[RMDB]
RNA sequence: GGGAACGACUCGAGUAGAGUCGAAAACUCUCCGUCAACCAUUAUGAUUUCAUAUUGGCCUAUUGUUACCUUGCCCAGGUAUGUGUCGUUAUAGUAGAAUUCCACGGUGCCUGUAGCGUCAUAAGGCCCUAUAGCCCGUAUUCGUACGGGCUAUAGGAAAAGAAACAACAACAACAAC
Reactivity to 2A3 in 0.01 (KOAc 150mM, MgCl2 10mM, bicine 150mM(pH8.5), 24C), signal-to-noise 6, nucleotides 027 to 126: c010u000c000u020c030c090g080u070c040a090a050c000c020a050u050u050a050u160g170a140u040u160u300c060a040u040a080u070u080g010g040c020c020u130a180u130u120g080u150u120a060c020c000u030u090g020c020c000c010a020g020g030u050a070u080g100u020g000u030c050g000u040u030a040u060a120g110u010a060g100a110a170u110u050c010c010a040c040g080g000u080g010c000c000u060g030u050a010g040c010g040u010c010a050u030a110a050g050g040c020
Reactivity to DMS in 0.01 (KOAc 150mM, MgCl2 10mM, bicine 150mM(pH8.5), 24C), signal-to-noise 3, nucleotides 027 to 126: c060u020c020u010c010c030g020u010c070a060a260c070c040a040u030u000a040u020g010a230u040u040u050c050a050u010a050u000u000g000g000c080c050u040a080u030u000g010u000u010a050c050c000u000u010g020c000c010c030a080g010g000u000a030u010g020u010g010u010c020g020u050u000a020u030a100g000u020a130g010a090a090u000u020c040c050a090c050g000g040u010g000c040c030u010g030u020a070g000c050g000u000c050a050u010a050a090g010g000c120